Background
Structure probing data (DMS) for a 177-nucleotide construct.
[RMDB]
RNA sequence: GGGAACGACUCGAGUAGAGUCGAAAAGAUAUGGACCCGAAGCUGCAUCGUGGCAUGGACGUUUGACGAUAAUCGGAAACGAUUAUCCGAGUCCAUGCCACGAUGACCCAGCUAAGGGUCCUAAGUCGUUGGUUAUACUGUUCGCAGUAUAACCAACAAAAGAAACAACAACAACAAC
Reactivity to DMS in 0.01 (KOAc 150mM, MgCl2 10mM, bicine 150mM(pH8.5), 24C), signal-to-noise 4, nucleotides 027 to 126: g010a100u010a300u000g010g010a010c000c000c010g010a300a070g020c010u000g000c010a020u010c010g010u010g000g000c020a000u000g020g010a030c000g020u020u010u030g010a280c300g000a020u000a000a000u000c000g020g000a210a130a240c010g000a020u000u000a000u010c010c010g010a050g030u000c000c000a000u000g000c010c000a010c000g000a000u010g000a100c240c300c070a010g000c000u000a030a300g000g000g000u000c000c010u000a020a080g020u010c100